[RMDB]
RNA sequence: GGGAACGACUCGAGUAGAGUCGAAAAAUACCGUUAUUUUGAAACUGAAGGACGGCGAUGUCGCACUUGAGCUUCGCCCCGAUCUUGCGCCGAAGCAUGUGGCGCAGAUCAAGAAACUGGUGCGCGAACGACGGAGUGAUUUCGAUCACUCCGUCGUAAAAGAAACAACAACAACAAC
Reactivity to DMS in 0.01 (KOAc 150mM, MgCl2 10mM, bicine 150mM(pH8.5), 24C), signal-to-noise 1, nucleotides 027 to 126: a140u010a110c000c010g020u000u010a170u000u020u000u010g020a100a120a090c130u000g010a050a040g000g000a030c010g020g040c130g020a160u010g000u060c000g000c070a010c000u000u000g030a050g030c120u010u000c050g000c100c040c070c300g000a030u010c000u020u000g050c010g010c000c000g030a040a240g000c220a100u010g040u010g060g000c010g000c000a000g010a000u000c020a080a050g000a010a060a080c000u010g000g000u000g000c030g000c010g010a120
Reactivity to 2A3 in 0.01 (KOAc 150mM, MgCl2 10mM, bicine 150mM(pH8.5), 24C), signal-to-noise 1, nucleotides 027 to 126: a000u130a000c010c000g040u020u000a220u020u100u080u130g250a280a200a100c110u100g030a080a000g010g010a010c020g000g030c010g050a050u120g090u240c000g000c010a020c030u030u080g040a040g090c000u030u010c030g080c000c030c000c040g040a000u000c010u080u110g020c000g000c010c010g060a150a080g180c170a160u110g150u180g200g020c020g060c000a000g000a000u000c000a000a020g050a000a060a000c020u030g020g020u000g010c030g010c040g010a030